[RMDB]
RNA sequence: GGGAACGACUCGAGUAGAGUCGAAAAUCGUUCGAGUGUACACACACGUGUUCACGUGAGUGUGAUCUCGUACACUCGUUCGAGAACACUCGUGUACGAGUACGUUCGAACGUUCUCUCGAUCGAGAGAGAUCGUGUACUCGUGAUCACGUACACACACUGUGCGCAUUGUUCGCAAUGCGCACAGUAAAAGAAACAACAACAACAAC
Reactivity to 2A3 in 0.01 (KOAc 150mM, MgCl2 10mM, bicine 150mM(pH8.5), 24C), signal-to-noise 3, nucleotides 027 to 156: u000c000g010u000u000c000g000a010g000u010g020u020a000c040a020c010a010c000a010c060g010u070g140u300u260c180a100c120g050u090g120a140g000u050g000u040g120a110u040c130u090c250g010u030a010c020a010c010u000c010g000u000u000c000g000a000g000a040a020c090a020c040u030c030g000u000g000u020a000c010g000a000g010u000a010c020g080u070u250c040g030a020a020c010g030u060u000c000u000c000u000c030g060a300u000c200g010a090g000a000g000a000g000a220u010c010g000u000g020u090a000c010u010c000g020u030g040a140u130c020a010c020g040u140a050c070a000c000a020c000

Source: RMDB library OK3TST, as collected in RNAgym. Structure probing data (2A3) for a 207-nucleotide construct. The 2A3 profile rests on 1,744 reads.